[RMDB]
RNA sequence: GGGAACGACUCGAGUAGAGUCGAAAAAGGCCAUCAGCGCAUGCGUGGAACCUUUGUGGCUCCUCUGCCGAUCCAUACUGCGGAACUCCUAGCCGCUUGUUUUGCUCGCAGCCGGUCUGGAGCAAAGACAUGUGUCGGAAUUCGUUCCGACACAUGUAAAAGAAACAACAACAACAAC
Reactivity to 2A3 in 0.01 (KOAc 150mM, MgCl2 10mM, bicine 150mM(pH8.5), 24C), signal-to-noise 2, nucleotides 027 to 126: a010g040g000c030c000a040u080c060a060g030c030g000c090a060u240g020c040g030u040g040g010a120a180c010c000u030u050u080g150u060g030g000c010u020c020c000u030c040u070g010c010c010g010a030u020c000c000a030u040a120c050u110g010c020g020g020a050a050c030u020c020c020u020a050g030c010c030g000c000u020u060g040u000u030u020u020g010c000u010c030g300c040a020g030c040c060g170g010u080c020u010g020g000a000g000c030a030a020a010g050
Reactivity to DMS in 0.01 (KOAc 150mM, MgCl2 10mM, bicine 150mM(pH8.5), 24C), signal-to-noise 4, nucleotides 027 to 126: a040g010g020c030c020a070u010c060a150g020c060g020c130a050u030g010c030g010u000g000g010a130a090c040c020u000u000u000g030u020g010g010c000u000c030c020u000c060u000g030c010c020g000a070u000c020c040a070u030a090c110u000g010c010g000g000a070a090c090u000c030c050u000a100g000c020c010g000c020u020u020g000u000u010u010u010g010c020u010c010g010c010a030g000c040c110g010g010u030c010u000g000g000a000g000c010a020a040a050g030
Source: RMDB libraries RFM100 and RFMREP, as collected in RNAgym. Chemical mapping of a 177-nucleotide RNA with 2A3 and DMS. Values cover nucleotides 27 to 126.